Structure probing data (DMS and 2A3) for a 207-nucleotide construct. For DMS the reverse transcriptase was MarathonRT. It was measured as part of the RMDB library M2RFPK. Values cover nucleotides 27 to 156. Reactivities are rounded to 0.1 and cut off at 0 and 3. The reactions ran in a buffer of 150 mM KOAc, 10 mM MgCl2 and 150 mM bicine (pH 8.5), at 24 C. For 2A3, 3,499 sequencing reads were counted. For 2A3 the reverse transcriptase was SuperScript II with manganese.

[RMDB]
RNA sequence: GGGAACGACUCGAGUAGAGUCGAAAAAACCCGUUGAUUGACAUUGAACCGUCCUGUUAUCGAAAGAUAGGCAGAAGAUACGAAAUGUGUGACAGCAUGGGAAGUAAAGGCAGACCGUGGUUCCCUUAAAAUCGUCGAAUCUUCGGAUUCGACGAAAGACUUAGAUAAGGUUCGCCUUAUCUAAGUCAAAAGAAACAACAACAACAAC
Reactivity to DMS in 0.01 (KOAc 150mM, MgCl2 10mM, bicine 150mM(pH8.5), 24C), signal-to-noise 4, nucleotides 027 to 156: a070a080c000c000c010g030u000u010g010a140u010u000g010a090c060a090u000u000g030a100a100c060c030g010u000c030c020u000g030u010u000a050u000c050g000a150a100a170g000a040u000a040g010g020c030a040g010a050a060g000a090u010a120c090g020a070a100a050u000g010u000g010u000g010a110c060a080g010c050a070u000g000g000g010a080a090g000u000a050a080a090g000g010c020a050g020a100c030c020g030u000g010g020u000u000c000c000c000u010u000a050a050a090a140u000c000g020u000c000g010a020a000u000c010u000u010c300g020g000a030u000u000c000g000a020c010g010a010a010a070
Reactivity to 2A3 in 0.01 (KOAc 150mM, MgCl2 10mM, bicine 150mM(pH8.5), 24C), signal-to-noise 4, nucleotides 027 to 156: a000a000c060c000c000g000u070u050g040a300u020u090g020a020c020a030u010u080g040a090a050c040c030g030u030c020c000u030g010u080u040a030u050c020g050a090a040a030g030a030u030a040g110g000c010a010g030a080a020g030a050u110a100c040g040a030a060a060u080g050u010g020u030g070a030c020a010g010c030a040u080g000g020g030a060a010g040u130a080a070a050g040g000c020a010g020a050c010c030g030u040g010g020u020u010c010c000c000u020u040a060a120a030a080u030c010g000u000c000g000a000a000u000c010u010u030c070g030g010a000u010u000c000g000a000c000g000a000a000a000